[RMDB]
RNA sequence: GGGAACGACUCGAGUAGAGUCGAAAAGGCUGUUAAACUCUCAGGAAAGGUACCAAAGUGCAUGGCAGCGUUUGGCCCCAGUGAGCUGGAAAACACUUUCGUCUGGUCUUGAGAUGUUUCCUGCAGCAAGUGCGCAGAGAUUCGUCUCUGCGCACUUAAAAGAAACAACAACAACAAC
Reactivity to DMS in 0.01 (KOAc 150mM, MgCl2 10mM, bicine 150mM(pH8.5), 24C), signal-to-noise 1, nucleotides 027 to 126: g020g010c020u000g040u020u000a110a000a080c030u000c000u000c000a030g010g000a070a120a050g000g010u000a020c030c030a010a050a060g080u020g000c070a120u010g000g040c060a110g010c110g020u000u000u020g010g010c030c010c030c040a130g000u000g010a110g000c020u010g010g010a030a090a300a120c050a000c010u000u000u000c300g000u010c020u010g010g020u000c020u010u010g010a010g010a080u000g000u000u000u010c060c040u000g020c060a040g070c050